[RMDB]
RNA sequence: GGGAACGACUCGAGUAGAGUCGAAAAGCUAAGGAUGUCCUACAGGUACCCGCACGUAACCUUCAGAGAGUGUGGAUCUGAGUAGGAGACUGUGGUGCGCUGCUUUACAGACGUAGCCCAGUUUAAACCCAUUUAUAUGCUUCGGCAUAUAAAUGGGAAAAGAAACAACAACAACAAC
Reactivity to DMS in 0.01 (KOAc 150mM, MgCl2 10mM, bicine 150mM(pH8.5), 24C), signal-to-noise 3, nucleotides 027 to 126: g020c080u000a090a080g010g020a110u000g020u000c000c010u000a010c010a300g000g000u000a080c110c000c000g010c000a010c020g000u000a030a020c010c000u000u010c300a080g010a300g000a040g000u000g000u000g020g000a020u000c010u000g000a140g010u010a000g000g010a050g000a040c010u000g010u020g030g010u010g010c010g000c010u000g000c180u000u010u000a080c000a030g000a090c000g040u000a020g020c000c000c010a030g000u000u000u010a060a110a170
Reactivity to 2A3 in 0.01 (KOAc 150mM, MgCl2 10mM, bicine 150mM(pH8.5), 24C), signal-to-noise 2, nucleotides 027 to 126: g080c070u080a080a040g160g040a190u100g060u070c000c000u000a000c010a030g000g020u050a070c010c000c000g020c010a000c020g300u040a010a020c010c020u000u000c020a020g010a020g000a000g010u020g000u000g000g000a000u000c010u010g040a050g090u010a000g000g020a010g020a000c000u020g100u160g080g000u010g010c010g000c020u050g040c030u180u110u090a040c020a100g130a080c030g000u020a030g140c000c000c020a000g000u030u000u050a060a030a040